[RMDB]
RNA sequence: GGGAACGACUCGAGUAGAGUCGAAAAAAAAAAAAGAUAUGGAGGGAGACGCCCUUUCCGACGAAGAGCUUCGGAAACGAAGCUCAGAGGAAAGUGAGCGUCAUCGAUCUCCUAAGUCAAAAAAAAACAUGUAAGAAGUGUUCGCACUUCUUACAUGAAAAGAAACAACAACAACAAC
Reactivity to DMS in 0.01 (KOAc 150mM, MgCl2 10mM, bicine 150mM(pH8.5), 24C), signal-to-noise 1, nucleotides 027 to 126: a000a020a000a040a030a060a120a100g010a000u000a300u010g000g010a010g020g010g000a050g000a020c000g000c000c000c000u000u000u000c000c020g020a220c240g000a080a040g000a010g010c000u000u010c000g000g000a070a060a170c000g000a000a030g010c000u000c000a010g020a060g000g000a010a000a000g000u000g000a070g030c000g000u020c010a000u000c070g000a070u020c010u000c000c000u010a040a070g000u010c020a020a000a020a000a090a070a110a080a130